RNA sequence: GGGAACGACUCGAGUAGAGUCGAAAAACAAACAAUAGAAUGAAACAAAGAGUCGUGCAAAAGAGAGGCUAGAAAGAUGCACGACAAAGCUAGCCUACAAAAGACAGCGGGAAAACCGCUGUCGAAAGGUGAUGGAGCAGUUCGCUGCUUCAUCACCAAAAGAAACAACAACAACAAC
Reactivity to 2A3 in 0.01 (KOAc 150mM, MgCl2 10mM, bicine 150mM(pH8.5), 24C), signal-to-noise 4, nucleotides 027 to 126: a020c080a020a060a010c050a060a060u080a040g160a050a160u150g050a090a060a050c100a060a270a010g070a020g000u000c000g000u000g000c020a030a050a150a000g200a000g000a010g000g020c020u020a000g050a030a100a050g230a080u070g010c010a000c010g000a000c010a020a020a020g030c000u010a000g000c000c000u030a020c060a050a100a020a010g000a000c000a000g000c010g020g000g040a060a110a080a160c000c010g000c000u000g000u000c000g020a000a000a000
Reactivity to DMS in 0.01 (KOAc 150mM, MgCl2 10mM, bicine 150mM(pH8.5), 24C), signal-to-noise 2, nucleotides 027 to 126: a170c060a110a050a120c240a130a020u060a020g030a030a050u010g000a060a130a140c160a070a050a060g000a080g040u000c000g000u000g000c020a070a070a170a030g000a080g000a030g000g000c010u010a010g000a090a010a090g030a110u040g010c000a000c080g000a030c030a020a020a080g000c000u000a010g010c010c040u000a040c110a050a110a090a100g000a010c000a050g020c000g000g000g000a070a070a150a220c000c000g000c000u020g030u000c000g000a030a030a080